[RMDB]
An RNA of 207 nucleotides, treated with 2A3 and read out base by base. For 2A3, 308 sequencing reads were counted. The RNA was probed in 150 mM KOAc, 10 mM MgCl2 and 150 mM bicine (pH 8.5) at 24 C.
RNA sequence: GGGAACGACUCGAGUAGAGUCGAAAAUGCCGCAGCAAGCAUACAGACGACUGUGAAUACACUCAGUGAACGUAUCUCGUCUAAAUUAGAACAAGAAGCGAACGCUAGUGCUCAAACAAAAUGUGAUAUAGAAAUCGGAAAUUUUUAUAUCCGACAAGCGUACGGUAUCUUUCGAGAUACCGUACGCAAAAGAAACAACAACAACAAC
Reactivity to 2A3 in 0.01 (KOAc 150mM, MgCl2 10mM, bicine 150mM(pH8.5), 24C), signal-to-noise 1, nucleotides 027 to 156: u070g160c140c030g000c040a010g030c010a000a140g000c030a110u160a180c100a110g230a030c130g090a110c010u110g000u040g100a010a130u210a060c130a000c010u070c030a000g000u000g040a010a000c000g030u030a100u030c030u000c000g060u000c000u030a000a250a300u260u200a040g100a150a050c030a050a090g030a070a000g010c000g000a060a000c010g000c000u000a000g000u000g060c000u000c000a090a170a190c030a000a000a130a000u170g070u100g010a010u030a000u000a010g010a000a040a020u060c010g030g000a080a110a130u090u000u000u000u000a090u000a000u000c010c000g070a010c040a100a090
Source: RMDB library OK3TST, as collected in RNAgym.